RNA sequence: GGGAACGACUCGAGUAGAGUCGAAAAAUAAAAGAGAGUAGAUGAUUCGCGUUAAGUGUGUGUGAAUGGGAUGUCGUCACACAACGAAGCGAGAGCGCGGUGAAUCAUUGCUUCCGCUCCAAAAAAAUCUUAAAAGUGACUUCGGUCACUUUUAAGAAAAAGAAACAACAACAACAAC
Reactivity to DMS in 0.01 (KOAc 150mM, MgCl2 10mM, bicine 150mM(pH8.5), 24C), signal-to-noise 1, nucleotides 027 to 126: a120u020a110a080a100a140g000a030g030a020g030u010a020g010a010u000g000a010u010u000c000g010c010g020u000u000a060a140g000u030g020u010g010u000g040u010g010a050a040u010g030g000g010a080u050g000u010c070g040u000c000a000c000a030c010a020a040c050g000a060a050g010c030g010a160g000a140g000c000g000c050g010g030u010g010a060a030u000c060a000u010u010g030c040u000u000c020c030g010c050u000c010c070a000a010a060a100a060a040a150
Source: RMDB library M2PK90, as collected in RNAgym.
This 177-nucleotide RNA was probed chemically with DMS.
The DMS profile rests on 811 reads.
For DMS the reverse transcriptase was MarathonRT.
The reactions ran in a buffer of 150 mM KOAc, 10 mM MgCl2 and 150 mM bicine (pH 8.5), at 24 C.